The record gives the reactivity of an RNA of 177 nucleotides to 2A3 and DMS. For DMS, 1,571 sequencing reads were counted. It was measured as part of the RMDB library OK1LIB. The RNA was probed in 150 mM KOAc, 10 mM MgCl2 and 150 mM bicine (pH 8.5) at 24 C. For DMS the reverse transcriptase was MarathonRT.

RNA sequence: GGGAACGACUCGAGUAGAGUCGAAAAAUGCCGCAUUCAGUGACGGUAACUCUAGUGGGCAACUGUCCAUCUAGCGUUGACAUCUACAUACUAUAUAGUAAUACCAAUACUCAAGACUACGAAACGGGCAUCCACUCAUAUUCGUAUGAGUGGAUGCAAAAGAAACAACAACAACAAC
Reactivity to 2A3 in 0.01 (KOAc 150mM, MgCl2 10mM, bicine 150mM(pH8.5), 24C), signal-to-noise 5, nucleotides 027 to 126: a000u080g030c000c000g050c040a020u140u060c100a030g060u010g110a090c020g030g000u030a010a020c010u020c000u010a010g020u010g000g000g000c040a250a200c240u300g010u000c010c000a040u010c020u010a010g000c010g030u010u040g050a020c020a100u090c030u060a040c020a090u140a050c040u020a000u060a070u110a240g060u060a090a020u020a100c010c030a030a070u040a050c020u050c040a030a090g040a180c030u090a050c070g070a040a100a010c030g030g030
Reactivity to DMS in 0.01 (KOAc 150mM, MgCl2 10mM, bicine 150mM(pH8.5), 24C), signal-to-noise 2, nucleotides 027 to 126: a190u000g000c000c020g000c020a020u030u040c130a130g020u000g010a090c090g000g000u000a010a020c030u000c000u000a000g000u000g030g020g000c000a290a150c270u090g050u010c010c000a010u040c000u000a000g130c040g010u000u000g000a200c030a100u030c000u000a050c000a040u050a090c100u000a030u000a090u000a050g090u000a050a030u000a220c070c060a050a010u000a010c020u000c010a020a000g000a120c130u000a050c220g000a030a130a010c230g000g000